An RNA of 177 nucleotides, treated with DMS and read out base by base.
The reactions ran in a buffer of 150 mM KOAc, 10 mM MgCl2 and 150 mM bicine (pH 8.5), at 24 C.

RNA sequence: GGGAACGACUCGAGUAGAGUCGAAAAAUUUGUAGGCACUCAUAAAUGCUCACUGAGCUCAAGUCACUGCUGAUGAUUGUCUUAGUGUGAGCAUGCUCAGGACGAUUUUCACACAGAGUUAACUAUAUAUGCCUCCUGAGUUCGCUCAGGAGGCAUAAAAAGAAACAACAACAACAAC
Reactivity to DMS in 0.01 (KOAc 150mM, MgCl2 10mM, bicine 150mM(pH8.5), 24C), signal-to-noise 1, nucleotides 027 to 126: a100u000u000u000g000u010a160g000g000c060a070c090u000c100a130u010a060a100a010u000g010c040u000c040a060c010u000g000a010g000c130u000c080a070a150g010u000c060a040c050u040g010c170u010g000a160u020g010a110u010u000g020u000c010u000u000a080g020u010g000u010g020a030g030c050a020u010g000c070u010c050a010g000g010a060c060g000a130u000u000u000u000c100a040c210a070c140a110g030a110g020u030u000a090a150c010u000a070u000a080